[RMDB]
RNA sequence: GGGAACGACUCGAGUAGAGUCGAAAACUGUUUUGUUUGGUGGGAGUAGACCAAACGGUAAUACUGCACAAUUAACAAAAUUCGCUUUGCAAGAUUUAGAGUAUCAAUGGAUUGACGUGACACAACAGUGUGCUUCCUCUUUCGAGAGGAAGCACACAAAAGAAACAACAACAACAAC
Reactivity to 2A3 in 0.01 (KOAc 150mM, MgCl2 10mM, bicine 150mM(pH8.5), 24C), signal-to-noise 1, nucleotides 027 to 126: c000u000g050u130u100u140u020g000u000u000u230g130g050u040g030g000g010a160g040u100a000g000a000c000c000a000a250a000c050g000g080u160a250a150u050a100c000u000g000c070a000c000a090a130u120u000a140a000c000a050a000a190a230u110u170c100g040c000u000u000u110g150c000a030a050g010a160u000u300u140a000g010a010g220u010a050u100c000a120a080u050g080g000a260u010u080g000a000c000g000u030g080a040c000a000c000a180a090c030a030
Description: An RNA of 177 nucleotides, treated with 2A3 and read out base by base. Reactivities are given for positions 27 through 126. For 2A3, 275 sequencing reads were counted. The data come from the RNA Mapping Database (RMDB), library OK1LIB.